[RMDB]
RNA sequence: GGGAACGACUCGAGUAGAGUCGAAAAGAUCGCACAUGCUACGAUGCAGCGUCAUGGUGUACGAGUACCUAGAGUACGUCUGAUCUGAUCAGUACGUACGAUCUGAUCCAUGCAUGUGAUACAUGCGAUGGGAUGGUCCAUUCGUGGACCAUCCCAUAAAAGAAACAACAACAACAAC
Reactivity to 2A3 in 0.01 (KOAc 150mM, MgCl2 10mM, bicine 150mM(pH8.5), 24C), signal-to-noise 3, nucleotides 027 to 126: g030a020u030c020g000c030a000c010a060u070g020c020u090a060c140g040a040u100g230c020a020g010c040g080u050c030a060u160g010g040u070g010u030a040c070g020a060g080u090a080c020c040u090a050g050a020g120u000a000c000g000u000c010u020g040a020u030c070u080g020a070u010c010a000g010u080a020c030g000u010a010c020g000a000u000c000u010g000a020u000c010c000a010u120g000c010a000u000g040u170g050a090u120a150c000a000u040g000c030g090
Reactivity to DMS in 0.01 (KOAc 150mM, MgCl2 10mM, bicine 150mM(pH8.5), 24C), signal-to-noise 3, nucleotides 027 to 126: g000a020u010c030g040c040a040c020a110u000g000c040u010a150c100g020a030u000g020c010a030g000c260g020u010c040a030u000g040g030u000g010u000a020c110g010a210g040u010a090c120c230u000a170g040a210g000u000a000c000g000u010c000u000g010a000u000c130u000g000a020u010c030a000g010u000a010c040g000u020a010c010g010a010u000c010u000g000a090u000c010c000a080u000g000c010a000u000g000u000g020a150u010a300c030a020u000g000c030g010